Conditions: 150 mM KOAc, 10 mM MgCl2 and 150 mM bicine (pH 8.5), 24 C.
This 207-nucleotide RNA was probed chemically with 2A3 and DMS.
2A3 is a SHAPE reagent: it acylates the 2'-hydroxyl of flexible nucleotides of all four kinds.
It was measured as part of the RMDB library RNAMAK.
RNA sequence: GGGAACGACUCGAGUAGAGUCGAAAAGCUGGGUUCGCCCAGCCUUAGGCGUACUACAUGUAGCAGCCACAGAGGCAACAGCAGUCUUCCCAAAUAGGAAGACUGACAUGCCUCGUGGCUUCCCUACAUGUAUCGCAAUUUUUUCGUUCGCGAAAAAUUCAUCUGUUGUAUUCGUACAACAGAUGAAAAAAGAAACAACAACAACAAC
Reactivity to 2A3 in 0.01 (KOAc 150mM, MgCl2 10mM, bicine 150mM(pH8.5), 24C), signal-to-noise 4, nucleotides 027 to 156: g000c000u010g050g020g040u090u220c290g080c000c000c000a010g000c000c000u100u150a110g000g050c030g010u070a090c080u000a010c030a010u000g010u000a020g010c300a000g000c050c000a010c030a080g000a000g010g000c020a040a040c050a220g040c000a000g000u000c000u000u030c000c000c030a140a210a110u250a060g000g000a010a000g010a010c000u000g090a070c010a020u020g000c000c000u010c000g010u000g000g000c000u000u040c010c000c000u000a000c000a000u000g010u000a020u090c000g020c000a030a050u030u020u010u010u020u040c030g030u050u040c230g020c070g150a010a070a040a060a120
Reactivity to DMS in 0.01 (KOAc 150mM, MgCl2 10mM, bicine 150mM(pH8.5), 24C), signal-to-noise 2, nucleotides 027 to 156: g010c000u000g020g000g000u010u010c280g070c030c010c010a020g020c010c010u000u000a080g020g010c030g030u000a070c140u000a020c010a020u000g030u000a010g010c080a090g010c010c000a020c010a190g080a020g020g010c010a070a080c080a160g000c010a010g000u000c000u000u010c000c000c020a080a150a210u010a030g010g010a000a020g030a010c000u000g010a020c060a300u010g020c000c010u010c010g010u000g000g000c010u000u000c070c080c020u010a010c000a040u000g000u000a000u010c000g070c020a060a010u050u000u000u000u000u000c030g000u000u000c120g050c030g000a030a040a030a100a280